Source: RMDB library 15KLIB, as collected in RNAgym. Chemical mapping of a 170-nucleotide RNA with DMS and 2A3. The RNA was probed in 150 mM KOAc, 10 mM MgCl2 and 150 mM bicine (pH 8.5) at 24 C. The 2A3 profile rests on 17,441 reads.
[RMDB]
RNA sequence: GGGAACGACUCGAGUAGAGUCGAAAAGGGGGUACACUCGAGGAGUGGAAGGCGGGGAGGAGGGGGCUGAGGGCUAACCUACGGAAAUUCCUGAGCUCCCCUGACGUCCAGGCCGUCCCCUCUCCGAUGCGCGUACAGUUCGCUGUACGCAAAAGAAACAACAACAACAAC
Reactivity to DMS in 0.01 (KOAc 150mM, MgCl2 10mM, bicine 150mM(pH8.5), 24C), signal-to-noise 3, nucleotides 027 to 129: g010g000g000g000g000u020a100c080a000c000u000c020g040a110g000g000a060g040u000g020g010a080a060g010g000c060g000g020g010g000a110g000g000a120g000g000g000g000g000c050u050g020a000g010g010g000c080u030a060a090c010c010u060a120c070g000g010a000a010a000u070u030c000c010u040g000a010g000c000u030c000c000c000c000u010g030a100c090g040u040c020c050a060g010g000c050c020g000u040c010c030c040c020u050c000u020c010c060g030a050u060g040c130
Reactivity to 2A3 in 0.01 (KOAc 150mM, MgCl2 10mM, bicine 150mM(pH8.5), 24C), signal-to-noise 6, nucleotides 027 to 129: g040g000g010g010g030u100a040c040a020c020u030c060g160a110g090g020a020g020u040g000g050a060a050g050g020c080g020g030g010g010a050g020g020a100g000g000g000g000g000c030u070g040a060g000g000g000c010u050a070a060c010c010u040a070c050g040g030a040a040a060u110u020c010c000u030g040a020g000c020u190c010c010c000c000u010g030a050c020g090u020c010c000a020g000g080c020c000g060u050c000c000c000c000u000c000u000c000c020g050a070u150g040c060